[RMDB]
RNA sequence: GGGAACGACUCGAGUAGAGUCGAAAAGAUUUUCGCCUUGCACAUAAGAACGCAAUUCAUUUUUGCAGCAAUCGUCACAUAAAAUCAGCAUCACUAUAACGUGACCAUCGCUGUGGAUUUGCUGGAAAGUGCGCGGUUGGCUACCGGGAUGAAAUUCCAACCGCGCUACUUUCGAGUAGCGCGGUUGAAAAGAAACAACAACAACAAC
Reactivity to 2A3 in 0.01 (KOAc 150mM, MgCl2 10mM, bicine 150mM(pH8.5), 24C), signal-to-noise 4, nucleotides 027 to 156: g060a020u080u080u080u080c030g000c020c000u060u110g000c000a020c010a040u120a040a050g090a250a020c050g010c040a010a020u070u040c040a070u040u070u090u110u300g030c010a010g000c000a010a020u010c010g020u010c010a000c010a020u210a120a100a060a110u130c080a050g120c030a030u150c030a060c110u190a140u050a300a050c120g000u000g000a000c020c010a010u050c020g000c030u010g000u020g000g020a020u010u000u090g010c000u020g010g000a040a070a000g000u000g000c040g000c010g030g000u030u020g020g030c050u070a040c040c030g030g000g030a050u130g040a080a080a080u100u000c000
Reactivity to DMS in 0.01 (KOAc 150mM, MgCl2 10mM, bicine 150mM(pH8.5), 24C), signal-to-noise 2, nucleotides 027 to 156: g010a230u000u000u000u000c040g040c000c020u000u000g060c040a190c080a130u010a120a130g020a070a150c100g030c080a030a140u000u020c050a170u010u000u000u000u010g000c000a050g000c000a040a010u000c080g010u010c020a030c050a170u020a000a090a070a140u000c020a080g030c100a140u000c050a120c040u010a080u010a100a090c080g030u010g000a060c030c070a080u000c020g010c010u000g010u000g020g010a080u000u000u000g000c130u000g000g010a060a050a080g040u020g020c000g050c010g010g010u010u010g010g020c060u000a050c060c030g030g020g020a080u000g000a040a100a260u000u010c020
Overview
Source: RMDB library OK3TST, as collected in RNAgym. The record gives the reactivity of an RNA of 207 nucleotides to 2A3 and DMS. The RNA was probed in 150 mM KOAc, 10 mM MgCl2 and 150 mM bicine (pH 8.5) at 24 C. 2A3 adducts were read by reverse transcription with SuperScript II with manganese.